[RMDB]
RNA sequence: GGGAACGACUCGAGUAGAGUCGAAAAGUUAUGUCGUGGGGCUCCCAUUAGCUGCUGGAUUCCAGCCUCAUAAGGGAUAUCCUUUUUGGUUCUGUAGAGGGUGGAUUUAUUUCUCUCUCCAUGUGCGUGGGCUGCACUGCUCUUUAUCGCUGAGGCACUGAUUAGUUUUAUUCGUAAAACUAAUCAGAAAAGAAACAACAACAACAAC
Reactivity to DMS in 0.01 (KOAc 150mM, MgCl2 10mM, bicine 150mM(pH8.5), 24C), signal-to-noise 2, nucleotides 027 to 156: g020u020u010a060u000g010u000c050g040u000g010g010g040g040c020u010c020c020c000a210u010u000a100g020c020u000g020c020u010g010g000a160u010u000c020c030a150g020c000c000u000c040a080u000a120a140g020g000g020a100u000a060u010c040c020u000u000u000u000u000g020g010u000u000c040u000g030u000a070g010a060g010g010g000u010g000g000a070u000u000u000a080u020u000u000c020u000c020u000c030u010c000c000a090u000g020u000g000c040g000u010g010g000g000c070u000g000c040a070c030u000g000c020u000c030u000u000u000a080u010c070g040c050u010g010a080g050g040c060a300
Reactivity to 2A3 in 0.01 (KOAc 150mM, MgCl2 10mM, bicine 150mM(pH8.5), 24C), signal-to-noise 5, nucleotides 027 to 156: g030u070u080a050u160g120u070c010g020u060g000g020g030g000c020u030c010c010c010a060u100u090a020g020c060u100g000c030u030g050g020a130u150u080c060c030a020g000c020c010u030c010a080u090a090a080g060g000g030a060u030a080u170c010c000u060u060u040u080u170g030g000u060u030c030u060g070u090a030g010a050g040g030g030u040g020g010a020u040u160u020a100u010u200u040c040u000c010u000c000u000c030c050a080u130g030u020g040c030g020u040g020g030g000c020u030g000c020a010c050u010g010c000u010c000u060u140u070a140u120c050g000c070u070g040a060g030g030c060a000
An RNA of 207 nucleotides, treated with DMS and 2A3 and read out base by base. For 2A3, 3,527 sequencing reads were counted. 2A3 adducts were read by reverse transcription with SuperScript II with manganese.